Structure probing data (2A3 and DMS) for a 207-nucleotide construct. The 2A3 profile rests on 4,486 reads. For 2A3 the reverse transcriptase was SuperScript II with manganese.
RNA sequence: GGGAACGACUCGAGUAGAGUCGAAAAACUGACGGUACGCCGUCAGAACGGUAGAAAAGAUGGUUUGAAAACCACGCCUUCUACCAAUAUAGUAAAUAAAUAGGCGGAGCGGUCAUACGUGACCGGAAAAACAUAUUCAGCUUCGGCUGAAUAUGAAGUAGAUGUUAAACUUCGGUUUAACAUCUACAAAAGAAACAACAACAACAAC
Reactivity to 2A3 in 0.01 (KOAc 150mM, MgCl2 10mM, bicine 150mM(pH8.5), 24C), signal-to-noise 5, nucleotides 027 to 156: a010c000u000g000a000c000g010g000u060a030c210g040c040c000g000u000c000a000g010a040a010c040g000g010u010a000g010a000a000a010a020g070a300u020g010g070u040u110u270g170a210a190a000a000c000c000a010c010g000c000c000u000u000c000u000a000c000c000a030a000u150a020u050a030g080u070a010a070a110u070a040a090a040u150a020g000g000c010g020g020a020g080c020g020g000u000c010a020u040a120c190g090u020g000a000c000c000g000g010a050a060a000a000a010c000a000u000a000u020u000c010a000g000c020u030u090c170g140g010c000u000g000a000a000u000a000u000g000a020a010
Reactivity to DMS in 0.01 (KOAc 150mM, MgCl2 10mM, bicine 150mM(pH8.5), 24C), signal-to-noise 1, nucleotides 027 to 156: a080c010u010g020a010c000g030g000u000a150c250g090c010c000g000u000c010a030g010a040a040c080g000g010u010a010g010a000a000a010a000g000a070u010g000g000u020u000u050g010a150a140a190a050c000c010a040c020g000c000c000u000u000c000u000a000c010c000a080a060u010a070u000a150g010u020a100a100a090u010a070a040a130u000a080g000g030c000g000g000a240g040c030g000g030u010c030a090u000a030c210g050u000g000a300c000c000g030g000a010a020a080a070a130c000a020u010a010u010u000c000a010g020c000u000u000c300g000g000c010u010g000a010a040u000a010u000g020a030a120